[RMDB]
RNA sequence: GGGAACGACUCGAGUAGAGUCGAAAAGCCACGGGGAGUGUGAGAACGCGACCGGUGACCUAGAGUCGAUAUACACACAAACAUUCUAUCUCGCCCAGAUCUCCAGCAUGUAUAGACUCUGCUGAGACACCAAAAACUAAUUCGUUAGUUUUUGGUGAAAAGAAACAACAACAACAAC
Reactivity to DMS in 0.01 (KOAc 150mM, MgCl2 10mM, bicine 150mM(pH8.5), 24C), signal-to-noise 9, nucleotides 027 to 126: g010c080c010a040c050g000g000g010g010a220g020u000g010u010g000a190g000a140a060c090g010c020g000a150c030c020g010g030u010g010a060c060c050u000a080g010a060g020u000c030g010a090u000a080u000a060c070a060c100a070c110a080a090a100c100a070u000u010c050u000a060u000c030u000c060g000c020c010c030a100g010a090u000c040u010c030c030a050g010c060a050u000g000u010a210u010a160g000a040c030u000c020u000g000c040u000g000a070g000a250
Reactivity to 2A3 in 0.01 (KOAc 150mM, MgCl2 10mM, bicine 150mM(pH8.5), 24C), signal-to-noise 8, nucleotides 027 to 126: g020c020c010a020c030g020g000g010g000a060g010u030g000u020g030a080g010a080a020c060g000c010g020a010c020c000g040g040u050g040a070c020c030u060a060g010a030g090u020c020g010a010u020a010u040a120c050a010c020a000c020a040a130a030c020a100u110u020c030u080a130u040c050u030c040g030c010c010c010a040g020a100u010c020u010c040c010a010g010c020a060u110g030u090a080u020a120g030a020c010u020c010u050g000c010u020g020a030g010a020